[RMDB]
RNA sequence: GGGAACGACUCGAGUAGAGUCGAAAACAAUUAGAUUUGCUGGAUAAACAUUUAGCCAAACAGGAAUAUAUUUGCGGUGGAGAAUAUACGAUUGCCGAUAUUGCCAUUUGGAGCUGGUAUGGGCAGCUAUAACGACUAUCUUCGGAUAGUCGUUAUAAAAAGAAACAACAACAACAAC
Reactivity to DMS in 0.01 (KOAc 150mM, MgCl2 10mM, bicine 150mM(pH8.5), 24C), signal-to-noise 4, nucleotides 027 to 126: c050a090a130u010u010a100g010a130u000u000u010g010c030u000g000g000a110u010a080a090a120c090a070u000u000u010a070g010c020c040a030a050a090c130a090g000g010a080a080u010a050u000a050u000u000u010g010c050g030g020u010g000g000a200g000a060a060u010a070u000a060c100g010a110u000u000g010c020c030g010a040u000a030u000u000g010c010c020a170u000u000u000g010g020a110g020c050u000g000g000u000a050u010g020g010g000c010a050g010c130
Reactivity to 2A3 in 0.01 (KOAc 150mM, MgCl2 10mM, bicine 150mM(pH8.5), 24C), signal-to-noise 3, nucleotides 027 to 126: c030a030a080u130u120a060g060a170u020u080u120g020c010u040g020g050a080u060a080a150a000c000a050u100u050u170a040g020c020c000a000a040a040c030a070g000g090a090a040u090a000u040a070u110u140u150g030c010g030g000u030g060g070a080g060a060a020u140a020u020a270c070g060a080u060u100g030c020c010g020a020u010a020u060u060g050c020c020a070u120u060u120g080g000a080g020c040u010g000g020u090a070u070g010g050g000c000a000g000c000